[RMDB]
RNA sequence: GGGAACGACUCGAGUAGAGUCGAAAAUUCGCCAUUCGAGCCACAAAGAAUUGCAUGUCGUGGCGCUACGCAUGCACCAGAUUCACAAAUUUUGUCACCGACACAAAAGGGCGGUUUUACCGCUACAACUGACGUGCUCAUUCGUGAGCACGUCAGUAAAAGAAACAACAACAACAAC
Reactivity to DMS in 0.01 (KOAc 150mM, MgCl2 10mM, bicine 150mM(pH8.5), 24C), signal-to-noise 1, nucleotides 027 to 126: u000u000c070g020c000c030a110u000u000c080g030a050g000c030c090a030c030a160a110a030g000a040a050u030u000g030c040a010u000g000u000c080g000u000g000g000c110g000c090u000a030c080g030c010a060u000g000c000a080c130c050a120g010a170u000u000c120a030c100a100a080a120u010u000u000u010g000u000c070a050c100c090g010a140c170a080c170a050a050a070a080g150g050g000c000g010g000u000u000u000u000a070c010c010g000c020u000a030c130a040
Reactivity to 2A3 in 0.01 (KOAc 150mM, MgCl2 10mM, bicine 150mM(pH8.5), 24C), signal-to-noise 1, nucleotides 027 to 126: u040u000c040g130c050c020a040u080u070c050g000a000g060c000c000a060c000a050a110a030g130a070a120u100u110g000c040a030u050g030u190c040g050u020g080g060c010g070c020u000a000c010g040c010a020u060g000c020a010c000c040a010g100a150u060u130c000a010c060a080a050a130u110u150u020u060g060u050c010a000c110c090g090a000c010a000c000a050a040a020a040g030g010g060c070g000g040u030u070u130u130a010c000c020g010c060u110a060c000a060